[RMDB]
RNA sequence: GGGAACGACUCGAGUAGAGUCGAAAACAUCAUCAUCAACAGCAUAAUAUUCAUCGUAAUCGAACUUCAGUGUCGUUUGAUCAAGGCGUCGGCAAAUACAAUCGGAUGAAUAGAUCUGUCAAUGAUAAUCGGCAUCUCGGCGACGAGGAUGAUUACGCCGGGCCUAGUUUUUCGAAACUAGGCCCGGAAAAGAAACAACAACAACAAC
Reactivity to 2A3 in 0.01 (KOAc 150mM, MgCl2 10mM, bicine 150mM(pH8.5), 24C), signal-to-noise 1, nucleotides 027 to 156: c010a050u130c030a010u050c000a000u070c030a000a050c010a030g040c040a020u050a220a110u040a300u030u040c040a000u010c000g120u180a130a040u080c000g090a040a110c040u160u120c080a120g040u060g040u130c000g060u060u020u140g090a100u110c040a000a100g100g000c060g060u000c080g030g000c040a000a240a000u150a100c030a060a100u080c010g070g000a000u000g000a100a030u020a030g170a190u000c000u050g030u080c040a040a000u060g000a030u080a080a140u020c000g000g070c000a050u000c030u000c100g040g010c010g020a080c000g000a000g050g030a060u060g020a000u070u070a030c000g010